[RMDB]
RNA sequence: GGGAACGACUCGAGUAGAGUCGAAAAGCCACAGCAGUCCCUGAAGGCUGAAGCCCAGGCCCUGGAGGGCUCCCCAACCCAGCUGCCCAUCCUGGCUGACAUGCUACUCUACUACUGCCGCUUUGCCGCCAGACCGGUGCUGCUGCAAGUCUAUCAGUAUUUCUUAUAUGUUCGCAUAUAAGAAAUAAAAAGAAACAACAACAACAAC
Reactivity to 2A3 in 0.01 (KOAc 150mM, MgCl2 10mM, bicine 150mM(pH8.5), 24C), signal-to-noise 4, nucleotides 027 to 156: g000c010c000a040c010a010g060c020a000g040u070c020c020c000u050g080a100a030g030g000c030u050g050a060a010g020c020c000c010a010g010g020c000c020c040u050g040g040a100g070g030g000c010u040c000c010c000c000a030a080c040c000c010a020g020c040u090g040c030c010c010a090u140c020c010u020g030g000c030u020g030a050c020a050u120g010c000u050a100c010u030c030u080a130c030u030a030c040u060g050c040c010g020c040u090u040u070g050c040c010g030c010c010a030g020a100c030c060g000g040u060g020c020u010g010c000u010g000c030a040a030g040u020c020u070a120u120c030a040g100
Reactivity to DMS in 0.01 (KOAc 150mM, MgCl2 10mM, bicine 150mM(pH8.5), 24C), signal-to-noise 3, nucleotides 027 to 156: g030c010c030a060c050a110g000c010a080g020u000c040c020c040u010g010a100a110g010g000c010u010g000a090a120g010c040c040c040a180g020g020c010c030c040u020g030g010a230g010g020g010c010u000c010c030c050c040a160a180c100c000c030a170g020c030u000g020c020c010c040a090u000c040c040u010g000g030c010u010g020a110c040a070u000g010c030u000a030c030u000c030u010a080c030u000a100c040u010g000c020c030g020c090u000u000u000g010c000c010g040c020c030a140g010a070c000c020g010g020u000g030c000u000g000c000u010g010c010a040a130g020u000c010u010a170u000c080a200g020
Notes:
This 207-nucleotide RNA was probed chemically with 2A3 and DMS. The reactions ran in a buffer of 150 mM KOAc, 10 mM MgCl2 and 150 mM bicine (pH 8.5), at 24 C. For DMS, 6,973 sequencing reads were counted. For 2A3, 3,612 sequencing reads were counted. DMS adducts were read by reverse transcription with MarathonRT.